[RMDB]
RNA sequence: GGGAACGACUCGAGUAGAGUCGAAAAAGUGCACUAGGUACGCCUAGUGCACAUUCGAGGACAUACUGCUGAGGAUGUCAAAAAUGCAGUUGGAGUCCUCAACUGGAUAGGCUACGGCCUAUCCAGAAAAAGACUUGGUUGUUCGCAACCAAGUCAACAAACAGGAAUACUUCGGUAUUCCUGUUUGAAAAGAAACAACAACAACAAC
Reactivity to 2A3 in 0.01 (KOAc 150mM, MgCl2 10mM, bicine 150mM(pH8.5), 24C), signal-to-noise 2, nucleotides 027 to 156: a000g000u000g000c000a000c000u020a010g000g030u060a040c260g050c020c000u010a000g000u000g070c000a000c000a010u000u030c040g000a000g010g000a010c000a040u130a040c050u010g010c020u060g020a060g130g120a260u300g230u300c110a030a070a030a010a040u150g020c040a000g020u040u000g060g090a120g030u010c000c000u000c000a000a030c000u000g000g000a000u000a000g010g000c000u010a020c300g000g000c010c000u000a000u000c000c000a010g000a000a000a010a000a000g000a000c000u000u010g000g000u040u000g010u040u090c180g000c030a000a010c000c000a000a000g020u000c000a000a000
Reactivity to DMS in 0.01 (KOAc 150mM, MgCl2 10mM, bicine 150mM(pH8.5), 24C), signal-to-noise 2, nucleotides 027 to 156: a100g050u000g010c000a010c010u040a000g000g020u000a060c300g050c030c000u000a000g000u000g030c010a000c000a010u000u010c010g010a130g000g050a040c030a110u010a090c000u010g000c030u010g000a190g020g020a140u020g000u020c110a050a090a110a060a190u010g000c010a050g010u000u000g000g000a100g030u000c010c010u000c000a040a100c000u000g000g000a040u000a010g000g050c000u020a130c300g090g030c020c000u010a000u000c000c000a000g000a020a020a160a210a140g000a030c000u000u010g010g040u000u000g010u000u010c300g000c000a030a010c000c000a010a010g000u000c000a040a090
Chemical mapping of a 207-nucleotide RNA with 2A3 and DMS.
For 2A3, 1,218 sequencing reads were counted.
For 2A3 the reverse transcriptase was SuperScript II with manganese.
The DMS profile rests on 2,831 reads.
The RNA was probed in 150 mM KOAc, 10 mM MgCl2 and 150 mM bicine (pH 8.5) at 24 C.